[RMDB]
RNA sequence: GGGAACGACUCGAGUAGAGUCGAAAACCAUUCCUUAUACCUUGAGUAUUGCUGAAUUCAGUUUAGCGCGCAUGCUCUUGGCUAUUCUCAUAGUGAUUGUCAAAUUUGGAGUUACUUAUUCGUCAAUAAAACACUACCACGUUCGCGUGGUAGUGAAUCAUCCAUUAACGUUCGCGUUAAUGGAUGAAAAAGAAACAACAACAACAAC
Reactivity to DMS in 0.01 (KOAc 150mM, MgCl2 10mM, bicine 150mM(pH8.5), 24C), signal-to-noise 3, nucleotides 027 to 156: c030c020a250u010u000c030c010u010u000a160u000a060c010c010u010u000g000a050g020u000a050u000u000g030c020u030g040a070a100u000u000c140a210g030u000u010u000a050g000c060g060c230g030c110a120u000g020c010u000c010u000u000g020g030c040u000a080u000u000c060u000c060a170u000a070g010u010g010a060u010u010g010u010c000a060a080a140u000u010u000g020g010a190g010u000u000a060c060u000u000a070u000u000c050g010u020c050a060a100u010a050a070a090a160c000a020c010u000a010c000c000a000c000g060u000u000c280g050c020g040u000g010g020u000a000g010u000g010a020a070
Reactivity to 2A3 in 0.01 (KOAc 150mM, MgCl2 10mM, bicine 150mM(pH8.5), 24C), signal-to-noise 6, nucleotides 027 to 156: c020c010a020u050u090c030c010u100u100a040u050a150c000c010u020u030g010a020g020u020a060u150u150g000c010u030g030a200a190u180u230c070a140g110u070u090u160a080g010c070g000c030g000c030a000u040g000c000u000c000u010u010g000g010c010u030a040u100u060c100u010c070a110u120a120g070u060g110a100u050u120g120u080c060a070a100a170u110u090u170g060g000a060g050u070u090a090c030u090u140a090u170u150c060g100u070c080a100a050u060a160a110a020a010c020a000c000u000a000c000c000a000c000g040u030u040c130g020c020g130u010g000g000u000a000g000u000g000a000a000
Structure probing data (DMS and 2A3) for a 207-nucleotide construct. The data come from the RNA Mapping Database (RMDB), library M2RFPK. Values cover nucleotides 27 to 156. For 2A3 the reverse transcriptase was SuperScript II with manganese. The reactions ran in a buffer of 150 mM KOAc, 10 mM MgCl2 and 150 mM bicine (pH 8.5), at 24 C.